RNA sequence: GGGAACGACUCGAGUAGAGUCGAAAACAGGUAGCAAUUCUAUACAUUUGGCAAUCAGUGAAUUGAUAGGCGGUUUGCGAAUGGAUCCCUACUACCUGGUGACACCACAUUGAGGAAAUAACCAUUGCAUCGUUUAAUACUUCGGUAUUAAACGAUGAAAAGAAACAACAACAACAAC
Reactivity to 2A3 in 0.01 (KOAc 150mM, MgCl2 10mM, bicine 150mM(pH8.5), 24C), signal-to-noise 7, nucleotides 027 to 126: c000a000g010g000u010a000g000c050a050a110u190u030c030u100a080u040a090c010a050u030u050u100g300g000c010a020a020u020c030a050g070u030g190a220a130u170u140g080a100u150a140g170g010c040g020g000u010u030u040g010c000g020a010a010u020g010g010a020u020c010c000c000u000a010c000u000a000c000c000u020g000g040u050g030a030c060a020c060c010a030c040a090u040u130g090a100g040g060a040a080a060u110a070a030c030c030a060u030u160g030
Reactivity to DMS in 0.01 (KOAc 150mM, MgCl2 10mM, bicine 150mM(pH8.5), 24C), signal-to-noise 8, nucleotides 027 to 126: c010a020g010g010u000a020g010c040a030a080u010u020c220u000a050u000a070c030a020u000u000u000g030g030c030a040a020u000c030a050g030u000g010a120a170u010u010g010a130u010a110g010g020c030g020g010u000u000u000g010c020g010a030a020u000g010g000a030u000c010c070c010u000a060c010u000a010c010c000u000g010g000u000g000a170c140a150c020c020a080c130a100u010u010g010a080g010g010a060a050a080u000a070a160c080c050a120u010u010g020